[RMDB]
Source information: An RNA of 177 nucleotides, treated with DMS and read out base by base.
RNA sequence: GGGAACGACUCGAGUAGAGUCGAAAAAAAAGAUAUGGAUAGAAUGGAGAUUGAAGAUGUGAUGACCAGGCUCGGAAACGAGCCUGCAAGCAUCGUAGAUCGAUGAAAUUCUAUCCUAAGUCAAAAACGUUAGAUGUUUGUUCGCAAACAUCUAACGAAAAGAAACAACAACAACAAC
Reactivity to DMS in 0.01 (KOAc 150mM, MgCl2 10mM, bicine 150mM(pH8.5), 24C), signal-to-noise 1, nucleotides 027 to 126: a050a090a110a030g010a050u000a300u000g010g000a000u020a030g020a020a000u000g040g000a040g000a060u060u000g000a190a300g000a020u000g020u000g020a180u030g000a270c300c000a000g000g000c000u000c000g080g000a150a030a100c000g000a000g020c000c000u000g000c000a090a050g020c000a000u000c000g000u000a300g000a000u000c000g000a080u000g030a140a050a020u000u000c000u000a010u000c000c000u000a000a090g020u000c090a180a050a020a090a070

The RNA was probed in 150 mM KOAc, 10 mM MgCl2 and 150 mM bicine (pH 8.5) at 24 C.